[RMDB]
RNA sequence: GGGAACGACUCGAGUAGAGUCGAAAAUUAUGAUGGAAAGACUAAGUAUAGGGGAAGGUUAGACAUAACUUACUUGGCAAAGCUUAGUACUUUGGAAAUGGGUAGUUCCCCUAAAACCUGACAAAGGAAUAUUGGAAUUUAGAAAUAAUUAUGGGAACAUCAUCCUAGUAUUCGUACUAGGAUGAUGAAAAGAAACAACAACAACAAC
Reactivity to 2A3 in 0.01 (KOAc 150mM, MgCl2 10mM, bicine 150mM(pH8.5), 24C), signal-to-noise 2, nucleotides 027 to 156: u190u120a060u080g060a030u080g020g010a050a050a030g020a000c010u010a040a000g020u010a120u170a150g010g000g000g010a000a020g010g010u000u010a040g020a060c030a130u130a070a000c010u100u120a020c010u050u040g130g000c040a020a060a080g000c010u010u000a010g040u050a150c000u070u000u020g020g000a000a200a130u160g000g020g000u020a020g040u020u080c010c020c000c000u010a090a030a000a000c010c000u020g030a010c060a010a110a010g000g000a060a070u080a150u040u100g020g020a030a010u090u050u080a100g010a020a150a010u130a070a010u110u130a100u220g030g000g010a050a030
Reactivity to DMS in 0.01 (KOAc 150mM, MgCl2 10mM, bicine 150mM(pH8.5), 24C), signal-to-noise 2, nucleotides 027 to 156: u000u000a050u000g020a140u010g020g000a130a120a080g020a080c020u000a030a030g060u000a100u010a170g020g010g030g030a120a070g000g020u010u010a060g020a120c160a160u010a050a040c030u000u000a080c050u000u010g040g010c050a040a040a150g010c000u000u000a140g030u000a050c030u000u000u010g020g000a070a100a060u000g010g020g050u000a080g020u000u000c000c000c000c080u010a030a030a070a150c060c000u000g000a160c110a040a050a080g010g000a070a130u000a120u000u000g010g000a080a070u000u000u000a080g020a100a110a110u010a050a110u000u000a090u000g010g000g010a070a200